[RMDB]
RNA sequence: GGGAACGACUCGAGUAGAGUCGAAAAACGAAACCCAAGGUGCAUGCCGAUGUGCGGUAGGCCUCGUUAACAAACCGCAAAAAAAUAGUCGCAAACGACGAAAACUACGCACUCGCAGCUUAAUAACAGUAGGGUCCCUACUUCGGUAGGGACCCAAGAACAGGUAUGGAUUCGUCCAUACCUGUUCAAAAGAAACAACAACAACAAC
Reactivity to 2A3 in 0.01 (KOAc 150mM, MgCl2 10mM, bicine 150mM(pH8.5), 24C), signal-to-noise 3, nucleotides 027 to 156: a020c060g030a110a010a050c010c000c000a020a040g130g010u080g000c080a100u020g020c130c050g060a080u170g010u000g010c050g070g130u040a030g020g010c000c020u030c010g030u020u070a080a020c040a120a090a070c150c060g000c110a080a050a010a020a020a000a060u230a080g030u140c050g010c090a060a060a020c040g010a000c010g030a000a030a010a060c010u040a010c000g020c010a000c000u020c010g000c000a030g000c000u140u090a110a130u210a270a020c050a050g120u170a160g080g010g000u010c000c020c000u000a000c000u010u060c090g020g000u000a000g010g000g010a010c010c000c000a000a000
Reactivity to DMS in 0.01 (KOAc 150mM, MgCl2 10mM, bicine 150mM(pH8.5), 24C), signal-to-noise 1, nucleotides 027 to 156: a200c000g000a120a080a110c000c020c000a100a270g040g040u000g020c000a060u000g020c040c020g010a090u000g000u000g000c010g040g000u000a040g010g040c050c010u030c040g020u010u010a090a230c110a050a080a080c150c060g020c070a000a010a020a140a080a070a280u000a050g010u010c030g040c080a140a060a120c030g000a060c010g000a050a030a050a060c030u000a010c040g010c040a060c040u000c060g000c020a170g000c010u010u010a090a090u000a080a110c070a090g040u010a140g020g010g010u000c000c000c010u000a030c000u000u000c200g000g080u000a000g030g050g010a000c020c000c000a000a080

Chemical mapping of a 207-nucleotide RNA with 2A3 and DMS. The RNA was probed in 150 mM KOAc, 10 mM MgCl2 and 150 mM bicine (pH 8.5) at 24 C. Source: RMDB library M2RFPK, as collected in RNAgym. DMS (dimethyl sulfate) methylates the pairing face of unpaired adenines and cytosines. Values cover nucleotides 27 to 156. For 2A3 the reverse transcriptase was SuperScript II with manganese.